[RMDB]
RNA sequence: GGGAACGACUCGAGUAGAGUCGAAAAGUCAUCUCAGGGAAAAUAAUGAAAAUGAUAUCAAAAGACUUAGUGUCUGUUUUCUUUAGCAAUCUAAUGUUUUCUAAAGAUAUUGAUACAUUUGGAUUGUUCUUGCACUCUGCUGGCUGAUGGGCCCUUCCGCGCAUAAAACGUUCGCGUUUUAUGCGCGAAAAGAAACAACAACAACAAC
Reactivity to 2A3 in 0.01 (KOAc 150mM, MgCl2 10mM, bicine 150mM(pH8.5), 24C), signal-to-noise 1, nucleotides 027 to 156: g010u000c010a040u040c090u010c070a000g070g020g010a040a140a030a030u060a000a100u020g040a080a040a040a020u050g070a050u060a040u190c090a140a190a030a000g010a000c030u230u210a090g030u100g030u220c000u000g010u020u250u060u000c000u050u030u010a010g000c010a010a010u000c020u160a170a190u170g040u010u140u100u000c010u060a060a020a030g020a020u040a090u200u010g000a000u010a010c000a000u060u080u180g020g070a020u000u020g020u030u130c040u150u150g070c050a020c030u000c010u020g070c030u040g040g080c060u030g000a030u080g030g050g000c000c000c020u000u010c000